RNA sequence: GGGAACGACUCGAGUAGAGUCGAAAACGUCUCCGUGUGGAAGGACAGGUCCAGACGGCGCGAGUCCUUUGUGUUUGUGUCUGUCUCGUUGAAUCUCGGUGCCAAAACAAAGGGUGGUCCGAUUUGGCGAUAAAAAUACAUUCGUGUAUUUUUAUCGAAAAGAAACAACAACAACAAC
Reactivity to DMS in 0.01 (KOAc 150mM, MgCl2 10mM, bicine 150mM(pH8.5), 24C), signal-to-noise 6, nucleotides 027 to 126: c060g010u040c010u000c000c010g010u000g010u000g010g000a070a040g000g010a080c180a080g000g000u000c010c010a040g000a020c030g000g000c300g000c040g010a090g000u000c000c020u010u010u010g010u000g020u010u010u030g020u010g000u000c030u000g010u000c020u010c070g000u010u010g010a070a110u010c030u000c030g020g010u020g000c020c030a020a030a060a080c180a060a070a080g000g010g010u000g010g010u010c010c010g010a130u010u010u010g000g020
Reactivity to 2A3 in 0.01 (KOAc 150mM, MgCl2 10mM, bicine 150mM(pH8.5), 24C), signal-to-noise 3, nucleotides 027 to 126: c010g060u020c030u010c030c000g060u160g010u030g040g010a020a010g050g040a060c030a050g040g060u000c000c000a010g020a030c000g000g010c020g000c010g010a030g060u030c000c000u050u040u040g030u010g020u000u040u000g020u020g020u000c010u000g030u000c000u000c030g030u000u090g030a020a030u020c020u000c050g000g000u070g000c000c000a010a030a020a040c030a010a070a030g040g000g000u020g010g010u010c010c030g000a020u000u010u070g020g020